[RMDB]
RNA sequence: GGGAACGACUCGAGUAGAGUCGAAAAUUCGGUAGUAAUCGCGUGUCAGAAGCGCGCGGUGAAUACGUCCCUGCUCCUUGCACACACCGCCCGUCAAAGCACCCGAGUGGGGUCCGGAUGAGGCCGUAGAAAUGUCCUAAUUCGUUAGGACAUUUCUAAAAGAAACAACAACAACAAC
Reactivity to 2A3 in 0.01 (KOAc 150mM, MgCl2 10mM, bicine 150mM(pH8.5), 24C), signal-to-noise 7, nucleotides 027 to 126: u070u020c020g030g020u050a010g000u010a030a010u020c010g000c020g010u040g070u130c140a110g040a280a020g100c000g000c000g000c000g000g010u020g010a020a030u100a050c020g050u060c010c010c000u000g020c000u030c010c020u030u080g000c040a020c000a000c010a020c060c030g010c000c030c010g050u060c030a060a040a030g010c020a050c000c020c010g030a050g040u140g030g040g000g010u020c020c000g020g020a030u070g020a060g040g020c020c000g000u010
Reactivity to DMS in 0.01 (KOAc 150mM, MgCl2 10mM, bicine 150mM(pH8.5), 24C), signal-to-noise 5, nucleotides 027 to 126: u010u010c030g020g030u010a040g020u020a110a010u000c000g010c000g010u000g010u020c040a150g010a160a290g000c000g010c020g010c010g030g020u000g010a140a150u010a080c040g000u000c030c000c000u020g010c020u000c020c060u010u010g040c030a080c060a090c090a080c060c060g010c040c030c020g000u000c060a070a120a140g010c070a050c030c040c060g010a100g020u010g000g010g000g010u000c040c040g020g000a100u020g010a110g000g010c020c050g030u010
The record gives the reactivity of an RNA of 177 nucleotides to 2A3 and DMS. It was measured as part of the RMDB libraries RFM100 and RFMREP. The reactions ran in a buffer of 150 mM KOAc, 10 mM MgCl2 and 150 mM bicine (pH 8.5), at 24 C. For 2A3, 9,669 sequencing reads were counted. DMS adducts were read by reverse transcription with MarathonRT.